Source: RMDB library M2PK90, as collected in RNAgym. Chemical mapping of a 177-nucleotide RNA with DMS and 2A3. The 2A3 profile rests on 3,006 reads.

[RMDB]
RNA sequence: GGGAACGACUCGAGUAGAGUCGAAAAUCUAAGAGCGUAACACACACUCAGACUGUACGACAGUCUGACACACACAUACGCUAGUGUAUCGUGAGUGUGAUAUCGAUGUAGCACGAAAAUGAAAGAAUUUCACUGAAUCAUUCGUGAUUCAGUGAAAAAAAGAAACAACAACAACAAC
Reactivity to DMS in 0.01 (KOAc 150mM, MgCl2 10mM, bicine 150mM(pH8.5), 24C), signal-to-noise 5, nucleotides 027 to 126: u010c030u010a070a120g010a110g000c020g020u000a130a070c060a060c050a050c030a080c170u000c000a030g000a020c010u000g010u000a130c290g010a150c010a010g000u000c010u000g000a020c100a050c070a060c040a020c070a230u000a030c020g000c100u010a070g020u000g000u000a050u010c050g020u000g010a060g010u000g010u000g000a140u000a060u010c040g010a110u010g010u000a100g010c050a050c030g010a040a040a070a050u000g010a070a090a110g010a060a140
Reactivity to 2A3 in 0.01 (KOAc 150mM, MgCl2 10mM, bicine 150mM(pH8.5), 24C), signal-to-noise 3, nucleotides 027 to 126: u020c040u080a150a030g020a020g130c010g030u060a080a010c030a010c000a010c000a010c080u000c010a010g010a000c010u030g050u160a110c130g170a070c220a000g000u000c000u010g010a000c000a000c000a010c000a010c000a050u070a030c040g010c060u050a120g050u050g020u100a030u070c080g000u020g070a050g010u000g010u000g030a010u050a040u110c060g020a030u070g040u070a020g030c040a030c090g060a080a040a020a110u230g070a090a030a120g060a040a080
The RNA was probed in 150 mM KOAc, 10 mM MgCl2 and 150 mM bicine (pH 8.5) at 24 C.